[RMDB]
RNA sequence: GGGAACGACUCGAGUAGAGUCGAAAAACGCGGAGUACGCUCCGCGACAACACUUCUUUCGACCCGCUAACCGAUACCUAUGGGUCGUUAAAUUACGUCUCUAUCUUACUCACAUAACAUCGCACAAAAAACGUGGUUCGGUUCGCCGAACCACGAACCCCUCUUAGAGGUUCGCCUCUAAGAGGGGAAAAGAAACAACAACAACAAC
Reactivity to 2A3 in 0.01 (KOAc 150mM, MgCl2 10mM, bicine 150mM(pH8.5), 24C), signal-to-noise 2, nucleotides 027 to 156: a000c000g000c000g000g000a010g010u050a040c150g020c040u020c000c000g000c010g020a000c010a060a020c020a020c060u160u150c020u020u150u050c000g010a010c000c010c050g000c090u070a120a060c050c030g150a090u120a190c000c050u080a150u220g010g000g000u000c000g010u000u040a030a080a030u110u050a020c020g030u010c000u000c000u030a090u080c050u110u070a060c020u080c100a040c020a150u200a130a010c030a130u140c100g070c100a090c130a070a130a020a020a020a020c100g000u000g000g000u040u020c010g050g000u090u020c110g010c040c000g000a000a000c010c000a000c000g000a000a000

This 207-nucleotide RNA was probed chemically with 2A3. Source: RMDB library M2RFPK, as collected in RNAgym.